[RMDB]
An RNA of 170 nucleotides, treated with 2A3 and DMS and read out base by base. The reactions ran in a buffer of 150 mM KOAc, 10 mM MgCl2 and 150 mM bicine (pH 8.5), at 24 C. DMS adducts were read by reverse transcription with MarathonRT. Values are in units of 0.01, from 0 to 300, in steps of 10.

RNA sequence: GGGAACGACUCGAGUAGAGUCGAAAAGGAGAUGAGCGGACAAGCCACAUCCAGAGGACCCCUUCAGCGAACAGAAGACCCUGGUACCGGGGGGGAAUAGGCCAUAGUACGAGGGGAGAUGCUAGGAGACGUUUGUGCUUCGGCACAAACAAAAGAAACAACAACAACAAC
Reactivity to 2A3 in 0.01 (KOAc 150mM, MgCl2 10mM, bicine 150mM(pH8.5), 24C), signal-to-noise 4, nucleotides 027 to 129: g060g020a030g010a060u080g020a010g050c030g020g080a020c030a090a000g020c020c020a040c000a060u030c020c010a020g050a080g070g010a090c030c000c000c000u040u100c040a050g020c030g070a090a030c010a070g070a050a000g050a100c000c010c010u030g010g000u040a050c040c060g020g000g000g000g020g040g020a030a050u100a030g020g030c000c000a080u060a050g040u030a070c050g010a020g020g010g050g010a000g010a020u080g040c010u050a040g020g030a010g020a020c090
Reactivity to DMS in 0.01 (KOAc 150mM, MgCl2 10mM, bicine 150mM(pH8.5), 24C), signal-to-noise 5, nucleotides 027 to 129: g020g030a070g010a060u010g030a160g030c000g000g050a100c100a110a110g010c050c020a080c100a140u030c000c000a060g060a050g020g020a070c040c020c010c000u030u030c020a060g020c090g040a010a020c060a060g010a110a000g010a110c090c080c020u010g010g040u040a090c090c080g010g000g010g020g030g040g040a140a090u000a020g030g020c050c030a080u020a100g040u040a060c000g000a090g000g010g000g000a070g000a000u040g010c040u020a040g010g040a020g060a060c170